[RMDB]
RNA sequence: GGGAACGACUCGAGUAGAGUCGAAAAUUAGCGUCGCAUCAGGCAUCUGCGCACGACUGCCGGAUGCGGCGUGAACGCCUUAUCCGGCCUACGGGUGGCGCGAGAAUUUGUAGGCCUGAUAAGACGCGCCCUCCUCUGGAUUCGUCCAGAGGAGGGCAAAAGAAACAACAACAACAAC
Reactivity to 2A3 in 0.01 (KOAc 150mM, MgCl2 10mM, bicine 150mM(pH8.5), 24C), signal-to-noise 2, nucleotides 027 to 126: u110u060a000g020c000g000u000c000g000c010a010u000c000a010g000g000c000a020u000c020u100g090c070g000c060a030c100g140a060c100u050g000c000c020g020g000a000u030g010c000g000g000c000g000u010g000a010a010c010g030c010c000u010u010a010u000c010c000g020g000c000c010u060a010c040g090g010g050u100g090g050c040g020c050g080a110g030a070a120u120u120u160g070u070a030g050g040c010c010u000g000a010u010a010a010g000a000c020g030c010
Reactivity to DMS in 0.01 (KOAc 150mM, MgCl2 10mM, bicine 150mM(pH8.5), 24C), signal-to-noise 1, nucleotides 027 to 126: u010u010a180g000c000g010u000c000g010c150a020u000c000a010g000g010c000a110u000c040u010g020c080g010c060a050c100g000a140c250u010g000c020c000g000g010a000u000g010c140g030g000c010g000u000g000a060a110c060g000c010c000u000u000a020u020c000c050g010g000c020c040u010a030c070g010g000g010u000g020g000c010g010c030g010a060g020a090a150u010u010u000g000u000a090g000g000c000c000u000g000a010u000a040a140g020a000c000g010c120
Notes
The data come from the RNA Mapping Database (RMDB), library OK2TRN. The record gives the reactivity of an RNA of 177 nucleotides to 2A3 and DMS. High 2A3 reactivity points to a flexible backbone, as in loops and unpaired stretches. DMS adducts were read by reverse transcription with MarathonRT. Values cover nucleotides 27 to 126.